RNA sequence: GGGAACGACUCGAGUAGAGUCGAAAACCGUGUCAAUCCACUAUUAUGGCACGGCGUGUUAAAAGGGAGGAAGGGUCAGACCGCAGGACUUGCGGUGCGGUAUUGUGGAGACAUACCGCAAGGUUUCGUUACGCACAUUCUUCGGAAUGUGCGUAACAAAAGAAACAACAACAACAAC
Reactivity to DMS in 0.01 (KOAc 150mM, MgCl2 10mM, bicine 150mM(pH8.5), 24C), signal-to-noise 1, nucleotides 027 to 126: c000c010g000u000g000u000c020a010a140u000c080c030a050c140u000a100u000u020a020u000g000g000c010a050c000g000g000c060g020u000g000u010u000a020a050a070a170g000g010g020a150g000g000a070a040g000g000g000u000c100a100g020a090c010c030g000c040a040g010g010a240c140u020u000g010c010g020g010u000g000c000g000g000u000a030u010u040g000u000g000g020a180g000a090c170a030u010a000c000c000g070c020a030a020g010g010u010u000u000c020
Reactivity to 2A3 in 0.01 (KOAc 150mM, MgCl2 10mM, bicine 150mM(pH8.5), 24C), signal-to-noise 1, nucleotides 027 to 126: c000c010g000u010g000u000c020a010a050u010c010c070a070c130u100a080u300u070a140u130g010g000c000a000c000g000g000c020g020u210g040u020u120a140a080a010a020g040g060g050a170g030g080a110a030g020g050g000u030c010a000g040a070c000c000g000c010a000g050g110a140c040u070u010g000c010g060g020u010g000c000g000g000u020a020u080u120g090u040g030g000a050g000a000c080a040u000a010c020c000g000c050a030a020g060g000u010u100u050c020
Chemical mapping of a 177-nucleotide RNA with DMS and 2A3. The RNA was probed in 150 mM KOAc, 10 mM MgCl2 and 150 mM bicine (pH 8.5) at 24 C. The data come from the RNA Mapping Database (RMDB), library RFMREP. For 2A3, 1,112 sequencing reads were counted. Values cover nucleotides 27 to 126.